RNA sequence: GGGAACGACUCGAGUAGAGUCGAAAAGGAGUCCUGUGUAUGUCGUUGUCAACGUCGACCGAGCGUCCGUGCCAAGCGCUGCGUCACCAGGGGAUGACUGUCGGAAGAUGGUCAGUCCCGGGUGCAUAAGGAGUGGUGGAUGGUUCAGGACCGAAAGGAACGUUAUACGGUUCGCCGUAUAACGUUCAAAAGAAACAACAACAACAAC
Reactivity to 2A3 in 0.01 (KOAc 150mM, MgCl2 10mM, bicine 150mM(pH8.5), 24C), signal-to-noise 2, nucleotides 027 to 156: g190g030a030g050u090c020c000u040g030u010g010u090a090u120g010u000c030g000u040u020g090u050c020a040a000c120g040u020c040g070a090c130c110g060a080g030c070g010u000c000c000g080u070g010c030c030a100a020g040c030g000c050u050g010c000g100u080c000a000c020c000a020g000g010g030g060a000u020g000a000c000u010g000u000c000g010g120a050a050g000a060u010g030g010u000c030a010g100u050c010c000c000g030g000g000u010g010c040a020u060a070a090g130g030a040g050u020g090g080u170g050g140a060u030g010g050u090u020c110a100g070g010a030c040c010g040a080a080a000g120
Reactivity to DMS in 0.01 (KOAc 150mM, MgCl2 10mM, bicine 150mM(pH8.5), 24C), signal-to-noise 1, nucleotides 027 to 156: g000g010a140g040u000c040c030u000g040u000g040u000a040u000g020u000c000g020u000u010g000u010c010a060a110c060g010u000c010g000a080c010c020g020a110g020c060g020u000c050c050g000u010g070c000c040a060a090g030c020g000c030u000g010c090g010u010c040a010c000c000a060g000g000g000g000a070u000g000a040c010u020g000u000c000g070g070a160a300g010a020u000g010g000u000c000a030g000u010c000c000c000g000g050g020u080g030c070a070u020a070a070g000g030a160g040u000g010g100u000g010g040a060u000g020g040u030u020c010a120g020g000a070c050c070g000a110a120a200g000